[RMDB]
RNA sequence: GGGAACGACUCGAGUAGAGUCGAAAACUCGAAAGAGACCUGCAUAUCUUAGGCAGAUGACCAAGUCGCGUCUGAAAAGCGAAAGCCCUAAGAUAUGCAGCUGUGAGGACUUGACGCAGAAAAUAAACGUACUGACUAUCUUCGGAUAGUCAGUACGAAAAGAAACAACAACAACAAC
Reactivity to 2A3 in 0.01 (KOAc 150mM, MgCl2 10mM, bicine 150mM(pH8.5), 24C), signal-to-noise 3, nucleotides 027 to 126: c000u000c010g060a010a040a030g090a020g020a050c010c030u010g000c000a000u000a000u000c000u000u010a000g020g000c010a000g000a030u010g040a030c010c050a030a000g040u050c000g000c000g050u000c000u040g100a240a220a180a020g010c030g070a060a040a000g000c000c010c000u000a000a000g000a000u000a000u000g000c000a000g000c000u000g010u020g000a030g030g020a020c020u030u030g020a020c000g000c030a010g110a040a090a020a040u240a060a060a000
Reactivity to DMS in 0.01 (KOAc 150mM, MgCl2 10mM, bicine 150mM(pH8.5), 24C), signal-to-noise 1, nucleotides 027 to 126: c000u000c010g010a130a060a270g000a000g020a170c210c000u000g000c010a000u000a000u010c000u000u010a000g000g000c010a010g000a010u000g000a000c070c020a090a000g030u000c030g000c020g010u000c020u000g000a270a030a190a130g050c020g000a020a080a120g020c000c030c000u040a030a000g000a000u000a000u000g030c000a010g060c000u000g020u000g020a150g010g020a010c010u000u000g000a230c060g040c000a030g000a240a190a020a120u020a020a220a120